[RMDB]
RNA sequence: GGGAACGACUCGAGUAGAGUCGAAAAGGGGUCUGUACAGUUCCGUUGUCAGUAUCGAUAAGUACACUGAAGCCUCCACGGUGUACUUUUGACGAUACUUGGAUUUACGGAAGUACAGACGGAGGCACCCAAAGUCAACCUGUUCGCAGGUUGACAAUCGAAUAUGCUACUUCGGUAGCAUAUUCGAAAAAGAAACAACAACAACAAC
Reactivity to 2A3 in 0.01 (KOAc 150mM, MgCl2 10mM, bicine 150mM(pH8.5), 24C), signal-to-noise 3, nucleotides 027 to 156: g060g020g040g020u000c000u010g000u000a010c020a300g110u050u020c040c000g080u200u300g040u050c010a000g000u000a000u010c020g020a130u040a090a010g000u000a000c010a000c000u020g030a140a030g010c000c000u000c000c010a020c020g000g010u010g000u000a000c000u020u000u000u060g100a030c000g000a000u000a010c020u030u110g210g000a050u130u150u250a040c000g000g010a000a000g000u000a000c000a020g000a000c010g000g000a010g000g000c000a050c000c000c020a010a060a020g010u000c000a000a000c010c000u020g040u070u100c280g010c140a000g000g000u000u000g000a000c000a000a050
Reactivity to DMS in 0.01 (KOAc 150mM, MgCl2 10mM, bicine 150mM(pH8.5), 24C), signal-to-noise 1, nucleotides 027 to 156: g000g030g030g060u000c030u000g030u030a030c000a080g030u010u000c010c000g070u000u030g000u000c030a110g020u000a000u000c010g040a200u000a040a030g060u000a010c010a030c000u000g010a050a090g040c010c030u000c000c030a300c010g000g020u010g020u000a010c010u000u000u000u010g010a120c090g030a020u010a020c020u000u020g040g020a100u020u000u000a040c050g000g040a040a070g020u000a020c010a010g030a030c000g000g020a050g000g070c000a000c020c010c000a080a110a120g010u020c000a010a010c000c000u040g000u000u010c260g000c010a010g010g020u020u000g010a000c010a020a040

Conditions: 150 mM KOAc, 10 mM MgCl2 and 150 mM bicine (pH 8.5), 24 C. Chemical mapping of a 207-nucleotide RNA with 2A3 and DMS. It was measured as part of the RMDB library RNAMAK. For DMS, 2,468 sequencing reads were counted. 2A3 is a SHAPE reagent: it acylates the 2'-hydroxyl of flexible nucleotides of all four kinds. Values cover nucleotides 27 to 156. For DMS the reverse transcriptase was MarathonRT.